[RMDB]
RNA sequence: GGGAACGACUCGAGUAGAGUCGAAAAUCCUUUCUCGAUAGAGAUUGGAGUCAUACAACCCCAGAAACCAUUCCUUAAACCUUGAGUAUUGCUGAAUUCAGUUUAGCGUGCAUGCUCUUGGCUAUUCAUACCAAGGACAACUUCGGUUGUCCUUGAAGAAACUUGAGACGUUCGCGUCUCAAGUUUCAAAAGAAACAACAACAACAAC
Reactivity to 2A3 in 0.01 (KOAc 150mM, MgCl2 10mM, bicine 150mM(pH8.5), 24C), signal-to-noise 1, nucleotides 027 to 156: u050c000c000u000u060u010c020u010c010g260a300u200a230g000a000g000a000u000u000g000g000a010g030u080c050a020u140a300c010a060a090c040c000c020c000a030g220a120a120a000c200c120a080u100u100c030c080u050u070a030a020a200c020c000u010u000g010a000g030u000a010u150u170g070c080u070g060a110a170u150u150c040a250g120u000u000u210a000g000c010g010u030g110c050a040u010g000c010u000c010u000u000g000g000c000u180a000u020u290c020a050u130a090c020c000a000a000g000g000a010c000a000a000c000u050u070c180g080g000u000u000g000u010c000c000u010u000g000a000a000
An RNA of 207 nucleotides, treated with 2A3 and read out base by base. Reactivities are given for positions 27 through 156. For 2A3 the reverse transcriptase was SuperScript II with manganese. The RNA was probed in 150 mM KOAc, 10 mM MgCl2 and 150 mM bicine (pH 8.5) at 24 C. Values are in units of 0.01, from 0 to 300, in steps of 10. The 2A3 profile rests on 382 reads. Source: RMDB library M2RFPK, as collected in RNAgym.